[RMDB]
The record gives the reactivity of an RNA of 207 nucleotides to 2A3 and DMS. The DMS profile rests on 2,616 reads. For 2A3 the reverse transcriptase was SuperScript II with manganese. For DMS the reverse transcriptase was MarathonRT. Source: RMDB library OK3TST, as collected in RNAgym. The RNA was probed in 150 mM KOAc, 10 mM MgCl2 and 150 mM bicine (pH 8.5) at 24 C.
RNA sequence: GGGAACGACUCGAGUAGAGUCGAAAAACUGGAGCAGGAAGAUAAAAUGAGCUUGAGCUCUGGCAAGCCCAUCAUCAGAUUUCUUGUUGCAUGAGACACAUACAGUCCCUAAUUUAGAAGAGCUUAUUAGGUUUUCUGACACUCAGAGCCAAAUGUAGUACGACAAUAAGUUCGCUUAUUGUCGUACAAAAGAAACAACAACAACAAC
Reactivity to 2A3 in 0.01 (KOAc 150mM, MgCl2 10mM, bicine 150mM(pH8.5), 24C), signal-to-noise 4, nucleotides 027 to 156: a000c010u020g040g010a020g000c020a030g030g040a010a020g030a060u120a180a130a020a050u080g010a020g020c000u010u010g010a010g000c010u000c000u010g000g010c040a030a020g000c010c020c000a030u050c010a000u020c020a020g130a240u070u100u050c040u020u070g090u110u030g020c020a020u100g040a040g040a040c050a000c000a100u180a060c010a030g030u030c020c010c000u050a090a100u060u070u110a100g000a190a010g010a010g060c020u080u080a060u070u090a100g040g000u100u030u080u000c020u030g060a040c030a030c100u100c010a010g020a000g000c030c030a040a100a040u110g000u020a060
Reactivity to DMS in 0.01 (KOAc 150mM, MgCl2 10mM, bicine 150mM(pH8.5), 24C), signal-to-noise 2, nucleotides 027 to 156: a080c080u020g020g020a100g040c020a060g010g010a040a100g010a090u000a050a090a070a080u000g000a050g020c030u000u010g020a120g000c040u000c050u000g030g000c030a070a020g070c000c000c000a050u000c030a170u000c090a150g010a220u000u000u000c020u000u000g010u000u020g000c020a160u010g000a150g040a130c020a120c110a130u000a120c050a160g000u000c020c020c030u000a050a050u010u020u000a090g010a060a120g020a120g010c050u000u020a120u000u000a070g030g000u000u010u010u010c040u000g010a100c070a140c050u010c020a030g010a070g030c030c070a040a080a050u010g010u000a090